[RMDB]
RNA sequence: GGGAACGACUCGAGUAGAGUCGAAAAGAAAGGCAGCCAGUGCAGCCCACGUAGCCAGUCGACGCAUGCUUUUGCAUGCCGCCCACGACUGAGGGCAGCUGCGGCACUGAGGGCAGCUGCCGAAAGAAAAUAUACCUGCAUUCGUGCAGGUAUAUUUAAAAGAAACAACAACAACAAC
Reactivity to 2A3 in 0.01 (KOAc 150mM, MgCl2 10mM, bicine 150mM(pH8.5), 24C), signal-to-noise 4, nucleotides 027 to 126: g100a020a110a000g030g000c020a000g020c010c040a010g010u030g030c030a060g060c010c040c000a040c070g080u050a010g070c040c010a020g010u020c000g050a040c060g000c010a000u030g010c010u150u260u240u300g000c010a000u010g000c010c020g040c000c030c010a070c030g060a010c040u060g030a130g030g080g000c010a010g000c010u030g000c010g030g000c040a010c080u070g030a170g030g040g020c010a010g020c000u000g010c010c000g010a000a010a000g030a010
Reactivity to DMS in 0.01 (KOAc 150mM, MgCl2 10mM, bicine 150mM(pH8.5), 24C), signal-to-noise 7, nucleotides 027 to 126: g000a110a130a130g000g010c020a030g010c000c010a050g010u000g020c030a160g020c050c040c040a170c140g010u010a080g020c050c010a040g000u010c030g030a130c170g000c000a010u000g010c000u010u010u010u000g010c000a000u000g010c030c130g000c030c030c100a300c040g000a020c020u000g010a140g000g020g000c030a090g000c020u000g010c020g020g010c060a050c050u010g000a110g000g010g000c080a060g000c010u000g000c000c000g010a020a070a110g000a090

This 177-nucleotide RNA was probed chemically with 2A3 and DMS. The data come from the RNA Mapping Database (RMDB), library OK2TRN. Reactivities are given for positions 27 through 126. DMS adducts were read by reverse transcription with MarathonRT. The RNA was probed in 150 mM KOAc, 10 mM MgCl2 and 150 mM bicine (pH 8.5) at 24 C. For DMS, 10,251 sequencing reads were counted. For 2A3, 6,655 sequencing reads were counted.